RNA sequence: GGGAACGACUCGAGUAGAGUCGAAAAUGGGCCUAGAGACCUGGCCCACAUUGUUUUGCCUGUUCUGCUAUCACCCUCAAUGACAAUACUAUUAGGUCUCCAUGGCCGCGCAGCGGAAGACACGACGAGGAUGAAGUCGAUUCGUCGACUUCAUCCUAAAAGAAACAACAACAACAAC
Reactivity to 2A3 in 0.01 (KOAc 150mM, MgCl2 10mM, bicine 150mM(pH8.5), 24C), signal-to-noise 1, nucleotides 027 to 126: u120g000g000g000c040c010u040a010g020a000g000a060c000c000u020g000g000c000c050c000a010c010a020u000u040g060u040u090u050u120g000c010c020u060g010u030u060c030u040g110c020u050a070u110c000a060c020c010c010u030c020a040a090u170g020a020c010a030a010u090a210c060u080a110u220u110a050g000g000u010c000u000c010c000a100u080g010g010c010c000g020c000g000c020a010g020c010g020g070a060a010g050a050c030a000c060g110a030c030g030
Reactivity to DMS in 0.01 (KOAc 150mM, MgCl2 10mM, bicine 150mM(pH8.5), 24C), signal-to-noise 1, nucleotides 027 to 126: u040g000g000g030c000c000u020a220g000a010g000a010c000c000u030g000g000c000c000c000a000c070a000u030u000g010u020u070u010u030g020c020c070u000g010u000u000c010u060g000c090u000a120u070c120a030c060c110c010u030c040a020a130u010g030a140c080a030a090u000a070c170u070a060u020u000a000g000g010u000c000u000c000c020a040u010g000g010c000c010g010c150g000c100a080g000c040g030g000a020a110g020a130c030a000c120g000a090c030g040